[RMDB]
Structure probing data (DMS and 2A3) for a 177-nucleotide construct.
Reactivities are given for positions 27 through 126.
The reactions ran in a buffer of 150 mM KOAc, 10 mM MgCl2 and 150 mM bicine (pH 8.5), at 24 C.
Source: RMDB library OK1LIB, as collected in RNAgym.
For 2A3, 26,056 sequencing reads were counted.
RNA sequence: GGGAACGACUCGAGUAGAGUCGAAAAACGGGCAGUGGCGAUGGCAACGCGGCAGCCGCAGGGUCGACUUCUUCGCAGCCGCAACAGACGGGCUACGGGCAAAGAGGGGCACUCGUUCUGUUGGAAGAUAGGUAAUGAUUUUCGAAUCAUUACCUAUAAAAGAAACAACAACAACAAC
Reactivity to DMS in 0.01 (KOAc 150mM, MgCl2 10mM, bicine 150mM(pH8.5), 24C), signal-to-noise 7, nucleotides 027 to 126: a100c100g000g010g010c040a050g030u020g010g010c060g010a070u020g000g010c060a090a070c110g000c030g000g020c060a100g010c060c040g000c060a060g000g010g000u010c060g000a070c100u020u010c040u010u010c080g020c070a100g000c020c020g000c050a070a080c060a080g010a080c080g000g000g000c050u010a060c090g010g010g010c080a040a070a090g010a090g010g000g000g010c050a100c060u010c040g000u020u000c030u000g010u000u000g000g000a080a060g000
Reactivity to 2A3 in 0.01 (KOAc 150mM, MgCl2 10mM, bicine 150mM(pH8.5), 24C), signal-to-noise 9, nucleotides 027 to 126: a000c050g010g030g000c030a060g030u050g070g010c040g050a080u070g050g000c040a060a040c050g010c000g040g020c020a020g040c030c020g000c030a030g030g020g010u060c020g030a070c010u060u020c010u040u030c060g000c040a030g020c020c010g020c010a010a030c020a020g070a020c030g020g020g000c020u100a050c060g030g040g020c060a070a080a020g060a060g020g010g010g000c020a020c050u020c010g050u110u030c030u030g010u020u010g010g020a050a030g060